[RMDB]
RNA sequence: GGGAACGACUCGAGUAGAGUCGAAAAGGCAGCGUUAUGACCAACUUCUGCUCUGUUGGGCCUCGCUUUACGUUCAGUACCUGCGGACGGGGCGGCGGCUGGUGAUCGUUCACGACGCACAGUUACACGACGCUAAAUAUUUCGAUAUUUAGCGUCGAAAAGAAACAACAACAACAAC
Reactivity to 2A3 in 0.01 (KOAc 150mM, MgCl2 10mM, bicine 150mM(pH8.5), 24C), signal-to-noise 1, nucleotides 027 to 126: g040g020c030a020g000c090g050u080u090a130u140g040a090c040c000a030a020c040u130u050c040u040g040c010u010c000u050g080u080u080g040g030g000c010c030u000c000g000c000u000u050u170a060c020g030u030u080c040a000g040u050a100c000c070u060g040c010g000g030a010c030g000g000g000g000c000g020g010c090g040g010c020u010g020g000u040g010a120u060c000g000u040u050c050a010c070g070a010c010g000c040a090c050a160g060u050u070a160c240a030
Reactivity to DMS in 0.01 (KOAc 150mM, MgCl2 10mM, bicine 150mM(pH8.5), 24C), signal-to-noise 3, nucleotides 027 to 126: g000g020c060a060g030c300g010u000u000a080u000g030a100c030c020a090a090c070u010u010c030u000g010c040u000c020u000g010u000u030g030g010g020c080c020u000c070g040c050u000u000u010a080c060g030u010u010c110a090g010u010a070c090c070u000g010c110g040g010a060c010g020g010g010g020c010g020g000c090g000g010c010u020g010g030u010g000a040u010c060g000u000u000c060a080c040g020a060c000g000c050a100c130a180g000u000u010a190c300a300